[RMDB]
RNA sequence: GGGAACGACUCGAGUAGAGUCGAAAAAUUCCCUCUCCAAGGGGACAUCAGUGCCUCUCAGGAAAGUAGCAGCUUGGAAUAGAAUCUGGCAUGCCUAAGGCCUUUGGGGAACUGGGAUGCUUAUUUCUCCUUCAAGUAGUUUCGACUACUUGAAGGAAAAAGAAACAACAACAACAAC
Reactivity to 2A3 in 0.01 (KOAc 150mM, MgCl2 10mM, bicine 150mM(pH8.5), 24C), signal-to-noise 5, nucleotides 027 to 126: a000u030u010c000c000c000u010c000u000c010c000a050a030g000g030g020g030a010c010a140u180c070a070g050u140g200c020c000u010c010u010c020a040g010g030a050a070a010g040u130a020g040c060a010g000c040u150u270g050g000a070a080u130a210g060a070a090u080c040u050g000g000c020a110u110g120c000c040u100a070a050g070g060c000c020u070u150u180g120g010g000g010a030a040c020u020g010g030g000a030u020g000c020u000u040a050u060u070u000c040
Reactivity to DMS in 0.01 (KOAc 150mM, MgCl2 10mM, bicine 150mM(pH8.5), 24C), signal-to-noise 4, nucleotides 027 to 126: a270u010u010c000c000c000u000c050u020c020c040a200a050g010g000g000g000a090c060a080u020c120a100g010u020g000c010c020u000c010u000c110a120g000g000a040a080a070g000u010a130g020c040a060g010c010u000u000g010g000a060a060u020a150g000a090a070u030c060u030g010g000c020a060u010g000c020c020u000a090a100g010g000c010c020u000u020u020g010g020g000g000a040a050c030u000g000g000g010a080u000g000c040u000u010a080u000u000u010c030

Structure probing data (2A3 and DMS) for a 177-nucleotide construct. For DMS the reverse transcriptase was MarathonRT. Conditions: 150 mM KOAc, 10 mM MgCl2 and 150 mM bicine (pH 8.5), 24 C.